RNA sequence: GGGAACGACUCGAGUAGAGUCGAAAAGAUUAGGCAGAUAACAACUAUUACGCGUCUUGCCACUGUAUUGUAAAGUAAACAACAAGAUAUAAGUUUAAUUCACCUACGCGACAAGAUGAAUCAGCAAUGCAUAAGCAUGAUUCGUCAUGCUUAUGCAAAAAGAAACAACAACAACAAC
Reactivity to 2A3 in 0.01 (KOAc 150mM, MgCl2 10mM, bicine 150mM(pH8.5), 24C), signal-to-noise 2, nucleotides 027 to 126: g060a020u040u200a040g100g000c030a020g090a120u100a120a030c050a040a030c050u050a070u260u120a070c080g000c010g080u010c000u050u020g030c040c000a030c040u070g010u050a060u110u060g060u080a030a080a120g040u010a060a030a000c040a050a020c020a070a030g060a070u030a010u040a200a010g030u020u010u060a030a010u050u040c030a040c000c020u030a040c050g010c040g040a020c020a030a000g000a010u070g020a010a080u080c030a030g050c090a020a070
Reactivity to DMS in 0.01 (KOAc 150mM, MgCl2 10mM, bicine 150mM(pH8.5), 24C), signal-to-noise 4, nucleotides 027 to 126: g000a090u010u010a050g010g000c040a060g010a070u000a090a050c130a050a110c080u000a080u000u010a090c200g010c060g000u000c010u010u000g000c010c030a060c080u000g010u010a030u000u010g000u020a060a050a100g000u000a010a050a040c040a090a110c150a070a080g010a110u000a070u010a090a080g000u000u000u000a020a040u010u000c070a010c020c190u010a020c090g020c030g000a020c070a020a010g000a010u000g000a050a040u010c080a070g010c100a070a130